[RMDB]
RNA sequence: GGGAACGACUCGAGUAGAGUCGAAAACAGAACAGCUGCGGUCAACGUACUAAUUGUUAAAUAAGAAAAGAAAGCCUCGGUUAGGCUUGUGUAUAUGAACGGUUUUUUUAUCAUAUGUUGUAAGUAACUUAAUACUGUUCUGAUAUGCAGUAGGUUACAAGUACAGUCUUUUCGAAGACUGUACUUGAAAAGAAACAACAACAACAAC
Reactivity to 2A3 in 0.01 (KOAc 150mM, MgCl2 10mM, bicine 150mM(pH8.5), 24C), signal-to-noise 2, nucleotides 027 to 156: c030a010g060a060a010c020a050g000c090u030g000c030g000g100u110c030a030a060c030g030u050a010c030u050a050a170u140u070g060u150u140a120a100a030u150a070a040g050a030a090a030a010g070a060a020a010g030c000c000u040c080g100g070u040u020a000g000g000c000u000u010g000u050g040u010a020u000a030u250g030a050a020c020g000g000u020u030u030u070u040u230u200a090u130c010a030u120a110u270g030u030u000g030u030a000a120g000u000a020a000c000u010u070a000a030u030a070c000u000g030u050u080c050u050g070a030u050a040u300g000c020a010g020u020a020g000g040u010u040a000
Reactivity to DMS in 0.01 (KOAc 150mM, MgCl2 10mM, bicine 150mM(pH8.5), 24C), signal-to-noise 1, nucleotides 027 to 156: c030a080g010a050a050c030a080g020c000u010g030c150g040g000u000c030a060a040c050g000u000a070c030u000a090a130u000u000g020u000u000a020a070a110u000a070a090g000a070a070a080a130g010a140a070a060g040c000c010u000c070g020g030u000u000a170g030g010c000u020u000g010u010g020u000a070u000a110u000g020a050a060c050g000g020u000u030u080u000u000u000u000a020u010c020a090u010a070u000g020u000u000g010u000a050a120g000u000a030a040c040u000u000a080a130u000a060c010u000g000u000u020c050u000g000a150u000a100u000g000c040a110g050u000a050g020g010u000u020a150